[RMDB]
RNA sequence: GGGAACGACUCGAGUAGAGUCGAAAACACUUUUGGUAAGCAGAACUGGCGAUGUGGGAUGAACCAAACGCAGAGUUAAGGUGCCGGAAUAUACACUUAUCAGACACCACAAAAGGUGUUAGUUCAUCGUUAGUAAAGGAUUCGUCCUUUACUAACGAAAAGAAACAACAACAACAAC
Reactivity to 2A3 in 0.01 (KOAc 150mM, MgCl2 10mM, bicine 150mM(pH8.5), 24C), signal-to-noise 9, nucleotides 027 to 126: c050a030c010u070u060u050u060g050g020u060a050a040g050c030a020g060a150a040c020u020g050g010c030g050a130u110g040u070g070g040g050a170u170g080a090a080c020c000a060a040a030c020g000c030a020g010a020g200u060u060a070a040g040g010u030g010c000c010g030g030a050a000u130a010u050a050c050a020c090u100u070a060u110c010a010g020a030c000a010c010c010a030c080a070a120a020a030g030g000u010g010u020u050a030g010u020u030c020a030u010
Reactivity to DMS in 0.01 (KOAc 150mM, MgCl2 10mM, bicine 150mM(pH8.5), 24C), signal-to-noise 5, nucleotides 027 to 126: c050a060c090u000u010u010u000g000g010u010a050a080g020c130a090g010a070a070c060u000g010g010c030g000a080u010g010u010g000g000g000a180u030g010a090a140c030c040a040a050a090c060g010c040a040g010a070g020u000u000a070a070g010g000u000g000c030c010g000g010a050a050u010a050u010a100c180a100c130u020u020a060u010c040a080g000a030c030a010c000c000a060c090a040a060a080a050g000g030u000g010u000u000a060g010u010u000c040a100u000
Annotation:
Chemical mapping of a 177-nucleotide RNA with 2A3 and DMS. Reactivities are given for positions 27 through 126. The RNA was probed in 150 mM KOAc, 10 mM MgCl2 and 150 mM bicine (pH 8.5) at 24 C. DMS adducts were read by reverse transcription with MarathonRT. It was measured as part of the RMDB libraries RFM100 and RFMREP.